Structure probing data (DMS) for a 177-nucleotide construct.
RNA sequence: GGGAACGACUCGAGUAGAGUCGAAAAGAUAUGGACGACAGGCGAAGGAACGAAGAACUUUGCUCCCCACCGCUUUCGGAAACGAAAGCGAGGCAAAGGGAGUUCGCUUCGCCUGUCGUCCUAAGUCCUAGAUAGAAUUGUUCGCAAUUCUAUCUAGAAAAGAAACAACAACAACAAC
Reactivity to DMS in 0.01 (KOAc 150mM, MgCl2 10mM, bicine 150mM(pH8.5), 24C), signal-to-noise 4, nucleotides 027 to 126: g010a120u000a300u020g010g020a030c010g020a030c020a020g010g000c000g010a030a010g020g000a020a020c000g000a160a150g000a150a240c000u000u000u000g010c020u000c050c040c020c020a300c090c010g000c000u010u000u000c000g000g010a140a090a130c010g000a010a020a000g000c010g000a030g010g000c010a000a010a010g010g000g020a120g010u010u000c010g000c000u000u000c000g000c000c010u000g000u010c000g000u000c000c000u000a000a090g000u000c040

About this RNA:
The RNA was probed in 150 mM KOAc, 10 mM MgCl2 and 150 mM bicine (pH 8.5) at 24 C. The DMS profile rests on 4,754 reads.